[RMDB]
RNA sequence: GGGAACGACUCGAGUAGAGUCGAAAAUAAGGAUGUGAUUUCGCCUGGUGUGUUGUUGCGCCCGUAGCUCGCUGAGGCUCACACGCGCAGUACAGCGCCCCGCCCUGCUGCAAUGCACCAGGACGGCAAUGCCAACCAUAUUCGUAUGGUUGGCAUUAAAAGAAACAACAACAACAAC
Reactivity to DMS in 0.01 (KOAc 150mM, MgCl2 10mM, bicine 150mM(pH8.5), 24C), signal-to-noise 3, nucleotides 027 to 126: u020a120a070g010g000a140u010g000u010g010a120u000u000u000c040g010c020c010u000g000g020u000g010u000g030u010u010g020u010u000g010c010g000c040c100c060g020u010a050g020c030u000c070g040c070u000g000a130g020g010c010u000c120a080c170a090c210g020c070g010c040a060g010u010a100c090a040g010c030g010c060c040c030c030g020c000c020c020u010g000c050u000g000c010a010a030u000g000c000a020c010c000a000g000g000a010c060g020g000c250
Reactivity to 2A3 in 0.01 (KOAc 150mM, MgCl2 10mM, bicine 150mM(pH8.5), 24C), signal-to-noise 1, nucleotides 027 to 126: u160a000a030g090g070a120u110g030u100g110a180u030u090u090c030g020c010c010u010g010g000u000g010u010g020u020u000g030u000u010g000c000g010c040c000c020g040u050a020g010c010u010c030g130c090u060g090a080g130g000c000u000c000a070c000a010c070g060c000g010c030a010g040u130a070c020a050g000c000g010c000c000c020c000g070c000c020c010u040g000c010u030g000c000a000a000u010g010c020a020c030c000a010g010g010a000c000g000g000c020